Conditions: 150 mM KOAc, 10 mM MgCl2 and 150 mM bicine (pH 8.5), 24 C. Chemical mapping of a 177-nucleotide RNA with DMS. Reactivities are rounded to 0.1 and cut off at 0 and 3. High DMS reactivity at an A or C suggests that its Watson-Crick edge is free.
RNA sequence: GGGAACGACUCGAGUAGAGUCGAAAACAACAUUGAUAUCUUCAUGAAGUUGUUCAUGGUUUUCAAAAAUCUGAGAAGGCACUUAAAUGAACUGAGUCUAAAAGAUGAAGAACUUGACUGCCUGGUGACGAAUCACACUUUUCGAAGUGUGAUUCGUAAAAGAAACAACAACAACAAC
Reactivity to DMS in 0.01 (KOAc 150mM, MgCl2 10mM, bicine 150mM(pH8.5), 24C), signal-to-noise 1, nucleotides 027 to 126: c060a110a020c140a120u010u000g000a050u000a050u020c100u010u020c000a030u000g010a080a090g020u020u000g010u000u000c050a020u010g000g020u000u000u000u000c080a000a120a080a100a080u000c100u040g030a180g000a090a060g000g030c020a030c160u000u000a040a080a060u020g000a120a180c020u000g000a250g000u010c020u010a040a050a120a160g000a030u000g000a250a020g000a060a180c030u000u000g000a070c140u000g020c020c000u000g040g000u000g000